[RMDB]
The record gives the reactivity of an RNA of 207 nucleotides to 2A3. The 2A3 profile rests on 528 reads. The data come from the RNA Mapping Database (RMDB), library RSTRND.
RNA sequence: GGGAACGACUCGAGUAGAGUCGAAAAUUCCAUUUUCUGGAAAAAAGGUGGACCCGCAGCCAAACCCGUUUCGGCGGGUGCUGUCCACAGACUAAAUGGCAACGGGCCCGUCCCAAUUAAAUGGCGACGGCUCAAGAUAUAGUCGGGCCUGCAGGUGCCACUGGUAAUGGUUCGCCAUUACCAGUGGAAAAGAAACAACAACAACAAC
Reactivity to 2A3 in 0.01 (KOAc 150mM, MgCl2 10mM, bicine 150mM(pH8.5), 24C), signal-to-noise 1, nucleotides 027 to 156: u060u000c050c000a070u140u120u060u050c070u100g020g000a080a120a100a130a130a210g060g000u020g020g020a040c020c000c060g040c020a030g020c000c000a130a060a040c020c000c010g020u010u040u040c130g160g030c000g000g000g000u000g030c040u030g000u030c020c030a080c010a040g000a010c020u090a030a000a260u100g110g000c000a000a120c070g030g050g000c090c020c020g020u020c000c010c000a000a100u210u120a130a100a090u000g070g000c100g010a030c030g060g000c000u000c020a000a020g040a010u040a020u030a230g040u040c010g000g040g020c000c010u010g000c040a060g010g120u140g070